[RMDB]
Source: RMDB library OK3TST, as collected in RNAgym. Chemical mapping of a 207-nucleotide RNA with DMS and 2A3.
RNA sequence: GGGAACGACUCGAGUAGAGUCGAAAAAGCAUGAGCUCCUCUCCAAAUUGAUUGAUGAGUUAAAGGUCAAGGCCAACUCAGACCCCGAGGCUGAUGUCCUGGCCGGGCGCCUGCUCCACCGCCUUAAGGCCGAGUCAGUUACACACACAGUAGCCGACUAUUUCCUGAUAUUCGUAUCAGGAAAUAGAAAAGAAACAACAACAACAAC
Reactivity to DMS in 0.01 (KOAc 150mM, MgCl2 10mM, bicine 150mM(pH8.5), 24C), signal-to-noise 3, nucleotides 027 to 156: a120g030c060a080u000g020a180g010c030u000c020c010u000c010u010c040c050a060a080a140u000u010g010a130u000u010g010a140u030g010a090g040u010u000a060a090a090g020g010u000c050a090a120g020g070c000c020a050a070c020u010c010a040g010a070c010c000c020c060g010a130g030g020c010u000g010a070u000g010u000c020c060u010g000g030c000c000g010g010g020c060g000c030c030u000g030c050u010c000c010a060c050c030g010c020c010u000u020a080a080g010g030c000c010g010a110g010u000c000a050g000u010u000a090c040a110c050a090c090a130c030a110g000u000a100g040c010c030g030a160
Reactivity to 2A3 in 0.01 (KOAc 150mM, MgCl2 10mM, bicine 150mM(pH8.5), 24C), signal-to-noise 3, nucleotides 027 to 156: a010g080c090a100u110g010a020g020c000u010c020c020u030c010u040c030c050a080a120a140u130u110g060a060u070u100g040a080u040g030a060g050u100u100a110a060a050g040g000u020c040a060a000g000g000c010c000a020a030c020u020c010a090g030a300c000c000c020c070g040a100g040g010c010u030g020a060u100g000u050c010c050u010g000g000c000c000g010g000g000c040g000c000c030u050g000c000u020c010c010a020c020c020g030c020c000u050u130a120a040g020g010c000c000g000a000g000u020c020a010g010u050u080a040c090a010c000a000c000a000c010a100g030u040a010g060c010c000g030a020

The RNA was probed in 150 mM KOAc, 10 mM MgCl2 and 150 mM bicine (pH 8.5) at 24 C.